[RMDB]
RNA sequence: GGGAACGACUCGAGUAGAGUCGAAAACGAGAUCAAGGCCGGCGUUGUGAUGGCCACCAGGCUCAUGUUGAACAAACCCGAUACGGUGUUGCCCGAGUUGAUCACGCCCGAUACCAGCACGCCCGCGUGGGCCAGACGAAUUCGUUCGUCUGGCCCAAAAAGAAACAACAACAACAAC
Reactivity to DMS in 0.01 (KOAc 150mM, MgCl2 10mM, bicine 150mM(pH8.5), 24C), signal-to-noise 1, nucleotides 027 to 126: c070g000a070g000a030u030c070a000a160g020g010c000c010g040g000c120g000u040u000g010u200g060a120u030g000g020c040c000a020c020c150a070g000g000c020u000c170a000u020g000u040u000g000a050a170c120a010a040a170c050c050c020g000a060u000a170c200g000g000u000g000u020u000g000c020c050c050g000a000g000u030u000g000a000u020c000a160c040g050c020c040c000g060a070u000a090c070c040a000g040c130a150c120g000c010c070c000g030c210g040
Structure probing data (DMS) for a 177-nucleotide construct. The data come from the RNA Mapping Database (RMDB), library OK1LIB. The RNA was probed in 150 mM KOAc, 10 mM MgCl2 and 150 mM bicine (pH 8.5) at 24 C. DMS (dimethyl sulfate) methylates the pairing face of unpaired adenines and cytosines. For DMS the reverse transcriptase was MarathonRT.